[RMDB]
RNA sequence: GGGAACGACUCGAGUAGAGUCGAAAAGCGUACUACUCAGCCAUACGAGGUGGAGGUCCCGUGUCCCAAAUAGGACACGAACCCUCCACUACCCACCGUAUGGACCCUGAGUAUCGCAAAAGUAACGGAGUCAGUAUUCGUACUGACUCCGUUACAACGAUAUCAUCACUUUCGAGUGAUGAUAUCGAAAAGAAACAACAACAACAAC
Reactivity to 2A3 in 0.01 (KOAc 150mM, MgCl2 10mM, bicine 150mM(pH8.5), 24C), signal-to-noise 4, nucleotides 027 to 156: g010c000g060u140a110c030u000a000c000u020c000a020g090c010c000a000u000a000c000g000a020g020g010u000g000g020a000g000g010u080c060c050c010g000u000g000u000c030c020c020a160a300a110u300a110g000g000a010c020a010c000g010a010a030c010c020c000u010c010c020a000c010u000a000c010c000c000a080c020c010g000u000a010u010g010g020a040c090c020c000u000g000a000g010u020a020u300c010g000c020a050a080a000a040g010u000a010a000c000g000g010a010g020u000c000a000g010u010a020u050u210c250g040u080a020c000u010g000a000c000u010c000c000g000u000u000a000c000a000a000
Reactivity to DMS in 0.01 (KOAc 150mM, MgCl2 10mM, bicine 150mM(pH8.5), 24C), signal-to-noise 1, nucleotides 027 to 156: g020c000g010u000a100c060u000a030c000u000c000a060g030c010c000a030u000a000c030g000a120g090g010u000g000g010a070g020g020u010c030c100c000g040u000g010u000c000c000c030a110a180a270u000a030g000g030a050c030a020c000g000a010a020c030c010c010u000c000c000a000c000u000a000c030c010c020a300c140c030g000u000a030u000g000g010a110c150c300c050u000g000a030g020u000a000u000c030g020c030a080a050a080a160g000u000a010a000c010g040g010a020g000u000c000a020g000u000a090u000u000c300g060u000a020c000u000g000a030c010u010c000c020g010u000u000a000c020a050a130